Structure probing data (2A3 and DMS) for a 177-nucleotide construct.
Values cover nucleotides 27 to 126.
The DMS profile rests on 1,584 reads.
2A3 adducts were read by reverse transcription with SuperScript II with manganese.
The data come from the RNA Mapping Database (RMDB), library OK1LIB.
For DMS the reverse transcriptase was MarathonRT.
RNA sequence: GGGAACGACUCGAGUAGAGUCGAAAAUUUGGUACGGUAACAAAUUUAUUUGAAGAAACAAUCUCAAAUAAAGAAUUGUUUGAAUUAGAUUGUGACAUUUUAGUACCAGCGGCUAUUUCAAACCAAAUGAUAAGGCUCUGUUCGCAGAGCCUUAUCAAAAAGAAACAACAACAACAAC
Reactivity to 2A3 in 0.01 (KOAc 150mM, MgCl2 10mM, bicine 150mM(pH8.5), 24C), signal-to-noise 1, nucleotides 027 to 126: u140u130u060g000g000u000a040c030g020g050u060a000a040c030a000a060a030u010u000u060a000u020u020u110g040a170a090g030a010a150a000c070a020a210u000c000u000c000a000a000a000u030a000a000a000g170a070a290u010u010g030u000u000u040g000a040a000u090u000a010g200a210u090u180g070u090g030a000c010a010u000u060u180u130a000g000u000a040c090c000a000g030c070g120g000c010u000a070u230u150u080c030a010a020a050c000c000a000a000a060
Reactivity to DMS in 0.01 (KOAc 150mM, MgCl2 10mM, bicine 150mM(pH8.5), 24C), signal-to-noise 2, nucleotides 027 to 126: u040u010u010g000g000u010a040c020g010g020u010a020a020c020a030a090a100u010u010u000a030u020u000u000g000a080a110g010a050a090a120c080a030a030u000c010u030c030a010a030a050u000a050a020a070g000a140a140u010u000g040u000u000u020g010a060a040u010u000a020g000a040u000u010g000u000g000a090c110a170u050u050u020u010a100g030u000a000c050c010a060g010c250g030g020c150u000a030u000u000u010c040a060a150a110c060c140a070a060a130